[RMDB]
This 177-nucleotide RNA was probed chemically with DMS and 2A3. The DMS profile rests on 2,851 reads. Values cover nucleotides 27 to 126. The reactions ran in a buffer of 150 mM KOAc, 10 mM MgCl2 and 150 mM bicine (pH 8.5), at 24 C.

RNA sequence: GGGAACGACUCGAGUAGAGUCGAAAAUCUUGUGUAUGUCGCUAGUUAUAAUGAUGUUGAUUCCUUAGCACGAGCACUCACAGAGAAACAUUAUUCCGUGAUUAAGGUCGAUGGAAGAACUAUGAAGCCACACUUGAGAUUUCGAUCUCAAGUGUGGAAAAGAAACAACAACAACAAC
Reactivity to DMS in 0.01 (KOAc 150mM, MgCl2 10mM, bicine 150mM(pH8.5), 24C), signal-to-noise 2, nucleotides 027 to 126: u000c050u040u010g020u000g000u000a110u020g000u000c000g040c020u000a040g000u020u000a080u020a050a020u010g000a010u000g000u010u030g000a140u020u000c000c000u000u020a060g000c130a060c080g000a060g000c080a080c050u000c010a040c030a030g000a060g000a100a040a120c130a120u000u030a070u010u010c000c000g010u020g010a020u000u010a050a120g000g030u000c020g030a060u010g000g020a050a020g000a030a030c060u030a060u000g000a070a130g000
Reactivity to 2A3 in 0.01 (KOAc 150mM, MgCl2 10mM, bicine 150mM(pH8.5), 24C), signal-to-noise 3, nucleotides 027 to 126: u050c010u020u060g000u000g000u050a080u110g040u020c060g000c010u000a000g000u060u000a170u060a160a120u090g010a010u050g030u060u030g060a160u060u090c020c010u070u090a020g030c070a010c010g000a000g030c010a000c060u030c000a130c120a010g110a010g010a040a120a050c030a030u050u170a040u300u080c020c020g000u030g040a140u130u060a090a010g060g020u030c060g010a040u090g060g000a020a030g030a070a030c070u080a070u220g160a070a050g020